[RMDB]
RNA sequence: GGGAACGACUCGAGUAGAGUCGAAAAGAAUUGGUAUGUAAGCUACUUCUUCCAGUAGCUGCGUCAUAACAUCAAGGUUAUGCAUACUGAGCCGUAGCUCAGCUUCGGUCCUCCAAGGAAGACCAAAUACAGCUCAGCCCGUUCGCGGGCUGAGCAACGUAUCACUAAUGUUCGCAUUAGUGAUACGAAAAGAAACAACAACAACAAC
Reactivity to 2A3 in 0.01 (KOAc 150mM, MgCl2 10mM, bicine 150mM(pH8.5), 24C), signal-to-noise 2, nucleotides 027 to 156: g100a020a060u010u020g000g000u000a000u000g000u000a010a020g000c000u000a000c000u060u100c000u010u010c000c000a000g000u000a000g010c000u000g000c000g010u000c000a000u010a020a000c020a090u240c170a120a030g300g010u000u010a000u000g000c000a000u000a000c000u000g000a000g000c000c000g000u020a000g000c030u060c300a040g000c000u020u030c010g000g010u010c010c020u050c060c050a050a040g010g000a000a000g000a010c020c050a030a040a030u240a110c080a030g000c000u000c000a000g000c000c010c010g040u080u090c190g010c020g080g000g030c000u000g000a000g000c000a000a000
Reactivity to DMS in 0.01 (KOAc 150mM, MgCl2 10mM, bicine 150mM(pH8.5), 24C), signal-to-noise 3, nucleotides 027 to 156: g000a100a110u010u000g010g020u010a010u010g010u010a300a290g010c000u000a000c010u000u000c080u010u000c110c050a300g020u000a000g020c010u000g000c010g030u000c010a000u010a010a000c010a300u010c120a180a140g000g020u000u000a020u000g000c010a040u000a030c010u000g010a090g000c010c040g010u010a080g010c020u020c090a130g000c030u000u000c040g010g000u000c020c030u020c050c060a090a180g060g000a030a060g020a110c030c040a060a080a100u000a070c080a130g010c000u000c000a050g000c010c000c010g060u000u010c270g040c060g010g010g010c010u000g010a000g020c010a010a010
Structure probing data (2A3 and DMS) for a 207-nucleotide construct. Reactivities are given for positions 27 through 156. The reactions ran in a buffer of 150 mM KOAc, 10 mM MgCl2 and 150 mM bicine (pH 8.5), at 24 C.